[RMDB]
RNA sequence: GGGAACGACUCGAGUAGAGUCGAAAAGAUAUGGAAACAUUCCUCUUUUGACGGUCGUUCAGUCGGAAACGACUGAGCGACCGAUAAGAGGAUGUUUCCUAAGUCAAAAUCCGCGUUCGCGCGGAAAGUAGUGUUAGAACUUCGGUUCUAACACUACAAAAGAAACAACAACAACAAC
Reactivity to 2A3 in 0.01 (KOAc 150mM, MgCl2 10mM, bicine 150mM(pH8.5), 24C), signal-to-noise 3, nucleotides 027 to 126: g000a010u060a010u160g000g000a000a020a000c010a030u300u300c000c010u020c050u050u160u140u240g300a190c210g000g020u000c000g010u010u000c000a000g010u010c030g010g030a060a080a090c000g000a010c000u000g000a000g000c000g000a000c000c000g010a010u010a010a000g010a000g020g010a000u000g000u010u000u000c000c000u000a010a010g030u010c000a020a040a010a260u000c010c010g010c030g020u030u070c300g020c010g000c010g150g020a030a020a010
Reactivity to DMS in 0.01 (KOAc 150mM, MgCl2 10mM, bicine 150mM(pH8.5), 24C), signal-to-noise 2, nucleotides 027 to 126: g010a020u000a300u010g010g010a010a010a020c000a010u010u010c000c000u000c000u010u000u010u000g020a260c120g010g000u000c010g020u000u000c000a010g040u010c010g000g000a040a100a150c000g020a010c000u000g010a010g000c000g000a000c010c000g000a010u000a000a000g000a010g010g020a020u000g010u000u000u000c000c000u000a010a080g010u000c060a090a100a150a140u000c000c010g000c000g020u010u040c260g030c010g000c010g000g010a010a010a100

Structure probing data (2A3 and DMS) for a 177-nucleotide construct. For 2A3 the reverse transcriptase was SuperScript II with manganese. The reactions ran in a buffer of 150 mM KOAc, 10 mM MgCl2 and 150 mM bicine (pH 8.5), at 24 C. The DMS profile rests on 2,480 reads.